Source: RMDB library 15KREP, as collected in RNAgym.
Chemical mapping of a 177-nucleotide RNA with 2A3 and DMS.
The reactions ran in a buffer of 150 mM KOAc, 10 mM MgCl2 and 150 mM bicine (pH 8.5), at 24 C.
The 2A3 profile rests on 1,166 reads.
[RMDB]
RNA sequence: GGGAACGACUCGAGUAGAGUCGAAAAUCGCUUAACUACGCUGGGGCUUUGUGGGACAUUACAGUUAUAAACAAUGUGGACAAUGAAAUUGUUAAGUCUUCAGAUGUUGUAGACAGCAAUGAAAAUUCAUAUUCAAACAGUUCGCUGUUUGAAUAUGAAAAGAAACAACAACAACAAC
Reactivity to 2A3 in 0.01 (KOAc 150mM, MgCl2 10mM, bicine 150mM(pH8.5), 24C), signal-to-noise 2, nucleotides 027 to 126: u040c000g040c040u130u100a140a060c010u050a010c040g000c040u010g040g000g030g040c050u030u020u070g060u060g040g050g020a020c000a020u060u050a050c040a040g030u080u040a130u090a170a050a020c040a040a040u020g040u070g050g010a040c020a030a040u110g050a070a060a010u040u010g020u040u050a090a030g000u000c000u030u000c020a030g080a300u070g180u190u070g000u030a010g010a040c000a000g060c010a020a070u060g000a060a100a000a000u000u010
Reactivity to DMS in 0.01 (KOAc 150mM, MgCl2 10mM, bicine 150mM(pH8.5), 24C), signal-to-noise 1, nucleotides 027 to 126: u010c050g030c060u020u000a120a150c080u000a080c100g000c010u020g000g020g000g030c080u000u000u000g030u000g010g000g010a070c080a030u000u010a100c100a040g000u000u010a100u010a080a120a100c060a020a080u000g020u020g000g000a120c060a040a060u020g010a090a050a280u000u000g010u000u000a050a060g010u000c000u010u000c010a060g020a130u000g010u010u010g000u000a020g000a070c100a030g000c030a070a020u010g010a070a100a090a110u010u010